[RMDB]
RNA sequence: GGGAACGACUCGAGUAGAGUCGAAAAUCGCAAUCCUUCGGGAUUGCGAAAAAAGAUAUGGAGUGGAAAGGGAGCGUACGACUCGGAAACGAGUCGCGGCGCUUUGAUCUUUCGUAACAUCUCCUAAGUCAAAAAGUCGGCAGUUCGCUGCCGACAACAGCAUAACCAUGUUCGCAUGGUUAUGCUGAAAAGAAACAACAACAACAAC
Reactivity to 2A3 in 0.01 (KOAc 150mM, MgCl2 10mM, bicine 150mM(pH8.5), 24C), signal-to-noise 1, nucleotides 027 to 156: u030c000g050c010a000a000u000c020c010u030u100c220g050g000g000a010u000u010g010c000g000a010a020a000a000a000a000g010a010u010a000u030g000g000a000g040u100g090g050a010a000a000g010g000g000a000g010c000g000u010a000c000g020a000c000u000c000g040g000a040a000a000c010g000a000g010u000c010g000c030g130g000c010g000c000u300u020u000g000a000u000c000u000u030u000c020g080u090a110a020c030a130u080c000u000c000c000u000a000a000g000u000c020a000a000a000a070a210g020u000c000g000g010c000a000g020u030u130c150g040c110u020g000c000c010g000a000c000a010a000
Reactivity to DMS in 0.01 (KOAc 150mM, MgCl2 10mM, bicine 150mM(pH8.5), 24C), signal-to-noise 1, nucleotides 027 to 156: u010c020g070c000a020a010u000c000c010u010u030c300g050g030g010a040u010u000g020c000g000a000a000a070a060a060a060g000a040u000a080u010g000g000a030g020u000g050g000a060a040a040g000g000g030a010g010c020g040u000a040c000g000a010c010u020c000g040g000a030a020a030c000g010a010g010u010c000g010c010g000g000c000g010c010u040u010u010g010a030u040c030u010u000u010c000g000u000a160a220c150a110u010c010u010c010c010u000a000a240g000u010c040a090a060a120a160a120g000u000c030g030g020c000a060g010u000u010c300g010c040u010g060c000c010g010a000c000a010a080